Chemical mapping of a 177-nucleotide RNA with 2A3 and DMS.
It was measured as part of the RMDB library TTRINS.
The reactions ran in a buffer of 150 mM KOAc, 10 mM MgCl2 and 150 mM bicine (pH 8.5), at 24 C.

RNA sequence: GGGAACGACUCGAGUAGAGUCGAAAAGAUAUGGACCAACUACCCACCUUCCCGGCUACAGCUCGAAGAACUUUCUCGGAAACGAGAAAGGGAGAGCAUGUAGCCGGGAAGAGGUUGGUCCUAAGUCCAAUCUAGUACACUUCGGUGUACUAGAUUGAAAAGAAACAACAACAACAAC
Reactivity to 2A3 in 0.01 (KOAc 150mM, MgCl2 10mM, bicine 150mM(pH8.5), 24C), signal-to-noise 2, nucleotides 027 to 126: g150a090u250a230u300g000g010a000c010c000a010a000c040u260a280c030c010c030a020c040c000u010u010c000c010c000g020g000c000u000a000c000a010g010c020u020c050g300a300a080g000a030a030c000u000u040u000c000u000c000g030g060a130a120a080c030g020a020g000a000a000a000g000g030g000a070g000a000g000c030a060u030g000u000a000g050c000c000g010g000g000a000a000g000a000g000g000u010u000g000g000u010c000c000u000a010a000g040u060c040
Reactivity to DMS in 0.01 (KOAc 150mM, MgCl2 10mM, bicine 150mM(pH8.5), 24C), signal-to-noise 3, nucleotides 027 to 126: g030a200u010a140u010g010g000a020c010c000a000a000c000u000a150c020c000c030a300c120c000u000u000c000c000c000g020g000c000u010a010c000a040g000c000u000c000g000a130a150g000a170a150c010u020u000u000c000u000c010g000g010a120a090a260c000g010a000g010a000a000a000g030g000g010a070g010a020g010c000a040u000g010u000a000g010c000c000g000g010g020a010a000g000a020g020g010u000u000g000g000u000c000c010u000a000a050g010u010c130